[RMDB]
RNA sequence: GGGAACGACUCGAGUAGAGUCGAAAAGGUUUCACCUUCGGGUGAAACCAAAUAAUAGUCGGUAGAAAACGAUCAAAACUAGCGACUUACAUAACGAUCGAAAAAGAAUGGUGUUCGCACCAUUCAAGUCUAUGGUACGGUUCGCCGUACCAUAGACAAAAGAAACAACAACAACAAC
Reactivity to DMS in 0.01 (KOAc 150mM, MgCl2 10mM, bicine 150mM(pH8.5), 24C), signal-to-noise 1, nucleotides 027 to 126: g010g050u000u000u030c000a010c000c000u040u020c190g020g010g040u000g000a000a000a000c000c000a000a070a050u000a100a050u000a020g040u000c030g010g000u000a010g000a100a040a030a120c020g020a000u000c010a190a070a130a040c010u000a000g000c000g010a030c000u000u040a090c300a050u020a100a120c260g000a030u000c020g020a020a090a090a210a000g000a000a000u020g000g020u000g040u000u000c210g000c000a000c000c000a000u010u000c000a070a030
Reactivity to 2A3 in 0.01 (KOAc 150mM, MgCl2 10mM, bicine 150mM(pH8.5), 24C), signal-to-noise 2, nucleotides 027 to 126: g000g020u010u000u000c000a010c020c000u060u080c230g090g000g010u000g000a000a000a000c000c000a010a020a000u030a000a030u060a000g010u010c000g030g090u020a020g080a050a090a060a060c040g010a040u030c000a000a010a010a060c010u010a000g110c000g020a010c010u060u120a030c040a060u190a190a100c080g040a020u040c010g050a120a010a020a010a040g000a000a000u020g000g000u010g050u060u080c190g060c060a000c000c000a020u000u010c010a000a000